RNA sequence: GGGAACGACUCGAGUAGAGUCGAAAAGGACUCCGUGAGGAGUCCGUGCAGCGAGAGCUGCACAAGCGGUUAUUGUGACACGGUCCGCCAGCUCUUCGAUGUGGAGAAGAGCUGAGUAGUAGCCGCACGAUUUAUAGUGCGGCAUACGAGUGUCAGAAAGAAUGAUGACAUUCGUGUCAUCAUUCUUAAAAGAAACAACAACAACAAC
Reactivity to 2A3 in 0.01 (KOAc 150mM, MgCl2 10mM, bicine 150mM(pH8.5), 24C), signal-to-noise 2, nucleotides 027 to 156: g010g000a000c000u000c000c000g020u050g030a030g000g000a000g000u000c000c000g000u000g000c000a000g000c000g000a070g010a000g060c010u000g000c000a000c010a000a020g000c000g000g000u010u000a000u000u000g010u010g000a000c000a000c000g010g000u000c000c000g010c000c000a000g000c000u000c000u010u000c000g040a100u120g100u120g180g100a100g000a010a000g000a000g000c000u000g010a000g000u010a000g030u000a010g000c010c000g000c010a000c000g040a040u010u270u140a190u090a050g010u000g000c010g000g000c000a000u000a000c000g020a040g000u000g010u000c010a000g040a000
Reactivity to DMS in 0.01 (KOAc 150mM, MgCl2 10mM, bicine 150mM(pH8.5), 24C), signal-to-noise 2, nucleotides 027 to 156: g050g010a040c000u000c010c010g010u040g000a300g070g000a020g020u010c000c030g020u000g010c010a010g010c000g020a300g000a300g020c000u010g050c020a000c020a040a160g010c050g010g000u000u000a000u000u000g000u000g000a000c000a010c010g000g000u000c000c010g010c010c000a010g000c020u000c000u010u000c000g000a270u010g000u010g030g010a300g000a000a000g020a030g020c000u000g010a060g000u000a130g000u010a070g010c010c010g000c010a000c000g010a220u010u010u000a180u010a140g010u000g030c010g000g020c010a020u000a010c000g000a130g040u010g030u000c010a160g000a100
This 207-nucleotide RNA was probed chemically with 2A3 and DMS. Conditions: 150 mM KOAc, 10 mM MgCl2 and 150 mM bicine (pH 8.5), 24 C. For 2A3, 2,409 sequencing reads were counted. For DMS, 4,170 sequencing reads were counted. DMS adducts were read by reverse transcription with MarathonRT.